Source: RMDB library OK2TST, as collected in RNAgym. An RNA of 177 nucleotides, treated with 2A3 and DMS and read out base by base.
[RMDB]
RNA sequence: GGGAACGACUCGAGUAGAGUCGAAAAGGUUUGUGGCAGCGUACCGUCAAUGAGAUUGCCACUGAGUAUCCAGAGGUUACAGUCGAUUACAACCACAUUGAUGCUGCAACUAUUUAUAUGGUCACGGCAUCUCUGCUUCAUUCGUGAAGCAGAGAUGAAAAGAAACAACAACAACAAC
Reactivity to 2A3 in 0.01 (KOAc 150mM, MgCl2 10mM, bicine 150mM(pH8.5), 24C), signal-to-noise 4, nucleotides 027 to 126: g090g000u100u150u050g040u030g020g000c020a030g030c050g080u090a070c010c020g020u070c030a040a070u100g030a050g020a190u020u080g030c010c010a000c010u010g000a080g070u120a070u060c050c020a020g040a040g140g010u030u080a040c030a030g010u020c040g060a070u090u110a070c060a060a040c040c030a040c010a060u030u070g020a030u050g000c000u020g010c000a020a030c020u040a100u150u200u070a210u060a070u200g040g000u050c040a010c030g010g010
Reactivity to DMS in 0.01 (KOAc 150mM, MgCl2 10mM, bicine 150mM(pH8.5), 24C), signal-to-noise 5, nucleotides 027 to 126: g010g010u000u000u000g030u010g000g020c020a050g000c110g040u000a150c050c070g030u010c070a060a070u000g000a090g000a070u000u010g000c030c030a050c030u000g000a120g020u000a060u010c060c040a120g010a150g010g020u000u010a050c070a060g000u000c080g020a110u000u020a080c100a060a040c060c040a100c060a040u010u010g000a030u000g000c010u010g010c020a070a040c020u000a070u000u010u010a110u010a060u020g010g010u000c080a110c060g000g010
The RNA was probed in 150 mM KOAc, 10 mM MgCl2 and 150 mM bicine (pH 8.5) at 24 C.